[RMDB]
RNA sequence: GGGAACGACUCGAGUAGAGUCGAAAACGUUGAGCAAAGUGAUGUGUUUAACUACCUUUGUGCCCUCAUAAAUCUCGUUUUUGUCAGAGUCGCUCAAGUCUCUCUCAAAGAGUAUUUUGGUGGUGUCCAUGUUGGUGGCGAAGGCGCCGUACAAGGCGCGCCUAAUGAGUUUCGACUCAUUAGGCGCAAAAGAAACAACAACAACAAC
Reactivity to DMS in 0.01 (KOAc 150mM, MgCl2 10mM, bicine 150mM(pH8.5), 24C), signal-to-noise 1, nucleotides 027 to 156: c100g000u010u010g030a240g000c050a070a020a100g050u020g000a130u010g040u020g030u010u000u010a090a070c030u010a060c120c020u000u010u010g040u010g020c050c010c060u000c040a050u000a050a090a070u000c050u000c030g020u000u000u010u000u000g020u010c020a100g010a070g030u000c020g030c080u010c060a050a110g010u000c000u020c020u000c020u010c030a060a050a140g020a090g000u010a100u000u020u000u010g020g030u000g050g060u000g010u000c120c010a080u010g020u000u000g020g030u000g020g010c060g030a020a050g000g020c000g030c000c050g020u010a100c100a050a100g030g030c060
Reactivity to 2A3 in 0.01 (KOAc 150mM, MgCl2 10mM, bicine 150mM(pH8.5), 24C), signal-to-noise 1, nucleotides 027 to 156: c010g020u030u050g020a030g040c010a120a000a010g030u150g100a160u080g110u030g130u000u160u110a100a070c040u060a050c030c000u030u010u060g020u040g010c040c000c010u130c060a080u120a170a170a140u080c080u010c050g060u040u070u020u040u070g040u050c080a030g000a050g070u080c040g050c050u040c110a050a060g010u000c020u020c010u000c000u000c060a090a070a000g030a010g020u130a080u010u070u050u090g040g000u030g000g000u000g030u000c060c030a080u050g030u040u050g080g010u000g020g030c070g020a030a000g050g020c010g000c030c010g060u040a060c050a130a050g070g020c000
Overview
Chemical mapping of a 207-nucleotide RNA with DMS and 2A3.